Notes
Chemical mapping of a 207-nucleotide RNA with DMS and 2A3. 2A3 adducts were read by reverse transcription with SuperScript II with manganese. The reactions ran in a buffer of 150 mM KOAc, 10 mM MgCl2 and 150 mM bicine (pH 8.5), at 24 C.
RNA sequence: GGGAACGACUCGAGUAGAGUCGAAAAAGACCAUCUCUACGGAGGUGGUCAAGUCACGUAGCUAGUACCAGGUUGCAAUACUAGAGCGUUAGUCCUGGGGCGUACGGUGGCAGUACGCUGCCACCGAUAAAACUUGAAUACUUCGGUAUUCAAGUAACACGUACCGAUGAUUCGUCAUCGGUACGUGAAAAGAAACAACAACAACAAC
Reactivity to DMS in 0.01 (KOAc 150mM, MgCl2 10mM, bicine 150mM(pH8.5), 24C), signal-to-noise 1, nucleotides 027 to 156: a230g010a050c010c000a010u000c010u000c000u000a090c300g070g020a030g040g040u010g020g010u000c000a020a030g000u000c140a120c070g000u000a130g030c000u000a040g010u000a040c010c000a100g000g020u020u000g000c040a150a060u000a020c000u010a010g000a300g000c000g010u000u000a090g000u010c010c020u000g000g000g010g020c170g000u000a030c020g040g030u000g020g070c010a070g000u000a090c190g020c000u010g000c000c000a020c000c010g010a040u010a030a070a120a070c000u000u000g010a040a010u000a000c000u020u000c300g070g000u000a000u000u000c000a000a040g010u030a040a170
Reactivity to 2A3 in 0.01 (KOAc 150mM, MgCl2 10mM, bicine 150mM(pH8.5), 24C), signal-to-noise 2, nucleotides 027 to 156: a000g000a000c000c000a000u010c000u000c000u010a080c290g110g000a000g010g000u000g000g000u000c000a000a000g030u010c010a000c040g010u000a000g070c000u000a000g010u030a160c000c000a010g000g000u000u000g000c010a010a000u010a010c000u000a010g000a000g010c100g100u120u200a010g050u100c010c000u010g000g000g000g040c200g090u190a040c020g010g000u010g030g000c000a010g000u030a010c250g010c040u000g000c000c000a000c000c000g000a000u050a010a060a010a010c000u000u000g000a000a000u000a010c000u030u050c190g110g000u000a000u000u000c000a000a000g000u000a010a010
DMS adducts were read by reverse transcription with MarathonRT.